Chemical mapping of a 177-nucleotide RNA with DMS and 2A3. For 2A3, 5,502 sequencing reads were counted. The data come from the RNA Mapping Database (RMDB), library RFMREP.

RNA sequence: GGGAACGACUCGAGUAGAGUCGAAAACUGUGCCAUCUGUCAAUUUGUUAGAUGAUCAGAGGGGAAAAGAAGAGCUAGAGCAAUGGUUACGGAAUGGUAGCAAUACCAUAUCGUGAUCUCUAAUGAGCCAUUACUAUAGCUUCGGCUAUAGUAAUGGAAAAGAAACAACAACAACAAC
Reactivity to DMS in 0.01 (KOAc 150mM, MgCl2 10mM, bicine 150mM(pH8.5), 24C), signal-to-noise 5, nucleotides 027 to 126: c040u010g010u000g030c050c010a050u000c040u010g000u000c040a090a100u010u000u000g020u010u000a060g010a050u000g000a070u010c030a050g010a090g010g000g000g000a060a060a070a060g000a060a050g010a100g020c050u000a040g010a090g020c240a100a070u000g000g010u000u000a010c010g000g000a040a010u000g010g010u000a010g000c300a090a120u000a000c000c000a010u000a020u000c010g010u000g000a010u000c000u000c110u010a060a080u000g020a120g010
Reactivity to 2A3 in 0.01 (KOAc 150mM, MgCl2 10mM, bicine 150mM(pH8.5), 24C), signal-to-noise 4, nucleotides 027 to 126: c020u030g040u090g140c020c010a050u000c020u020g050u060c040a100a170u040u070u030g090u120u140a080g020a110u060g010a030u120c020a020g020a050g070g020g020g020a020a080a060a010g100a060a020g030a000g040c050u080a020g010a000g100c050a070a140u200g030g000u000u020a010c000g000g040a030a010u000g000g010u010a000g020c020a000a030u000a020c000c000a000u010a040u010c000g000u010g000a000u020c040u000c030u110a140a090u130g050a030g050